[RMDB]
RNA sequence: GGGAACGACUCGAGUAGAGUCGAAAAUAUGAUCGGCCUAACGUGACCGCCCUAUGGCAAGGACGGGAUUCUGCCUAUCAGGCAUGAACUAAGCGGUCGCGUAGCGGCCACCUCCCCAUUUAUUGCACCGCCUUAUAUGAUUCGUCAUAUAAGGCGGAAAAGAAACAACAACAACAAC
Reactivity to 2A3 in 0.01 (KOAc 150mM, MgCl2 10mM, bicine 150mM(pH8.5), 24C), signal-to-noise 7, nucleotides 027 to 126: u300a080u150g140a110u110c120g000g000c000c020u040a100a000c000g010u000g000a000c000c000g030c000c010c010u120a170u190g210g000c120a080a060g120g020a050c080g020g010g010a030u020u000c000u000g000c000c010u170a290u270c090a020g000g010c000a020u170g010a020a020c040u040a200a020g010c010g000g000u000c000g000c000g000u010a020g090c060g000g000c000c000a010c010c000u060c000c000c000c010a040u120u190u160a150u130u220g060c030a040
Reactivity to DMS in 0.01 (KOAc 150mM, MgCl2 10mM, bicine 150mM(pH8.5), 24C), signal-to-noise 3, nucleotides 027 to 126: u030a050u000g000a150u040c210g020g000c020c000u000a140a050c050g040u000g000a000c000c000g000c000c020c010u000a160u030g020g020c150a300a030g000g020a230c120g020g000g000a300u000u000c010u000g010c020c000u010a100u030c260a040g000g030c010a030u040g030a000a080c140u010a150a250g040c000g070g000u000c000g000c010g020u000a030g050c180g000g000c000c000a110c100c050u000c070c000c000c030a150u010u000u070a040u020u050g000c180a210